[RMDB]
RNA sequence: GGGAACGACUCGAGUAGAGUCGAAAAUCCAAGGGGUUCGCCCCUUGGAAAAUAAGGGAAACCGAGCAUACCGGUCGACUCCGGAGAGCCAAAGUCAAAUAAAAACCGUUGGGUUCGCCCAACGGAACUUAUGUAUUGGCUUCGGCCAAUACAUAAGAAAAGAAACAACAACAACAAC
Reactivity to DMS in 0.01 (KOAc 150mM, MgCl2 10mM, bicine 150mM(pH8.5), 24C), signal-to-noise 1, nucleotides 027 to 126: u020c010c000a000a000g010g030g010g020u010u020c250g000c000c000c000c000u000u000g000g000a020a010a070a070u010a040a180g000g000g000a070a160a170c040c030g000a090g020c070a160u010a140c040c020g000g000u000c010g010a060c050u000c010c020g000g040a070g000a080g020c030c020a000a050a050g000u010c030a110a070a220u030a030a040a080a150a100c000c000g000u000u010g000g000g020u000u030c220g000c000c010c000a010a000c000g000g000a000a000
Reactivity to 2A3 in 0.01 (KOAc 150mM, MgCl2 10mM, bicine 150mM(pH8.5), 24C), signal-to-noise 1, nucleotides 027 to 126: u000c000c000a020a000g010g030g000g020u030u050c140g100c010c060c000c000u000u000g000g000a040a000a000a000u040a010a020g030g020g010a040a020a040c010c030g000a030g000c020a030u040a190c020c000g000g030u030c090g040a010c060u020c240c000g060g000a110g040a000g080c040c000a030a050a000g010u010c020a010a120a160u140a070a100a030a060a040c000c000g000u000u000g030g000g040u060u050c200g080c010c000c000a000a000c000g000g000a000a000
An RNA of 177 nucleotides, treated with DMS and 2A3 and read out base by base.
Reactivities are given for positions 27 through 126.
Conditions: 150 mM KOAc, 10 mM MgCl2 and 150 mM bicine (pH 8.5), 24 C.
The data come from the RNA Mapping Database (RMDB), library M2PK50.
The 2A3 profile rests on 1,485 reads.
For 2A3 the reverse transcriptase was SuperScript II with manganese.
DMS adducts were read by reverse transcription with MarathonRT.